[RMDB]
RNA sequence: GGGAACGACUCGAGUAGAGUCGAAAACGCCUGAUGAUAGCGCAGGACACAGGAACGGCAAUUGUCGGGCCUGCGCGCGGCGAUCUUUUCACCGGUUCGGGCGAUGAGGCGGGCAAGAUUGCCGGCACUAAUCAGUCGAGUUCGCUCGACUGAUUAGAAAAGAAACAACAACAACAAC
Reactivity to 2A3 in 0.01 (KOAc 150mM, MgCl2 10mM, bicine 150mM(pH8.5), 24C), signal-to-noise 3, nucleotides 027 to 126: c060g030c020c010u070g070a110u080g030a050u150a070g000c020g000c010a000g020g030a040c050a000c010a170g190g070a160a040c010g030g000c050a120a300u180u230g030u030c030g030g070g030c000c000u000g000c000g000c000g010c010g020g000c010g000a020u020c070u070u110u060u050c110a130c040c010g050g110u030u030c030g030g070g080c090g030a110u180g040a050g090g010c050g030g000g010c020a000a030g020a210u070u040g020c000c000g000g000c000a030
Reactivity to DMS in 0.01 (KOAc 150mM, MgCl2 10mM, bicine 150mM(pH8.5), 24C), signal-to-noise 3, nucleotides 027 to 126: c190g020c020c010u010g020a070u010g010a150u010a080g030c030g010c020a040g000g010a150c090a130c120a100g000g020a100a140c020g010g020c040a280a100u010u010g020u000c030g020g000g020c000c000u000g000c000g010c000g010c020g000g010c000g000a020u000c070u000u000u000u000c070a120c030c010g000g000u010u010c040g000g000g020c080g000a130u000g000a100g000g000c020g010g000g010c250a040a060g020a080u000u000g020c010c000g020g020c090a150
The data come from the RNA Mapping Database (RMDB), library OK2TRN. Structure probing data (2A3 and DMS) for a 177-nucleotide construct. The RNA was probed in 150 mM KOAc, 10 mM MgCl2 and 150 mM bicine (pH 8.5) at 24 C. Values cover nucleotides 27 to 126. For DMS the reverse transcriptase was MarathonRT.